Chemical mapping of a 177-nucleotide RNA with DMS and 2A3. It was measured as part of the RMDB library OK1LIB. The 2A3 profile rests on 216,686 reads.
RNA sequence: GGGAACGACUCGAGUAGAGUCGAAAACGAGGACUACAUCAUCCUACAUUACACCAUCAGAUAUUUGUAAUGUAUCGAGAUGGUCGUAUCUGAUGGUGAUCAUCUCGUGGAUGGUGUACGUCCUCAGGCUUCUCGUAGAUUUCGAUCUAUGAGGAGCAAAAGAAACAACAACAACAAC
Reactivity to DMS in 0.01 (KOAc 150mM, MgCl2 10mM, bicine 150mM(pH8.5), 24C), signal-to-noise 6, nucleotides 027 to 126: c140g010a010g010g010a020c000u000a010c010a000u010c010a010u000c000c020u020a070c050a040u010u020a060c010a060c140c050a030u000c100a060g010a060u020a040u010u030u020g020u010a050a040u010g020u010a050u030c090g010a070g010a050u010g000g000u000c030g000u000a040u010c050u010g000a040u010g010g010u000g000a020u000c060a020u000c030u000c060g020u010g000g010a010u000g000g010u000g010u000a000c180g000u000c000c000u010c000a010g000
Reactivity to 2A3 in 0.01 (KOAc 150mM, MgCl2 10mM, bicine 150mM(pH8.5), 24C), signal-to-noise 9, nucleotides 027 to 126: c080g000a000g000g000a000c000u000a000c000a000u000c000a000u000c000c000u010a010c000a010u020u020a010c010a010c050c020a060u090c040a030g070a090u080a060u140u220u120g080u070a070a060u050g060u050a100u150c060g020a020g020a110u090g030g020u010c010g030u040a070u060c040u100g080a090u110g040g030u030g010a010u010c010a010u000c010u020c040g030u030g000g000a000u000g000g000u000g000u000a000c010g000u000c000c000u000c000a000g000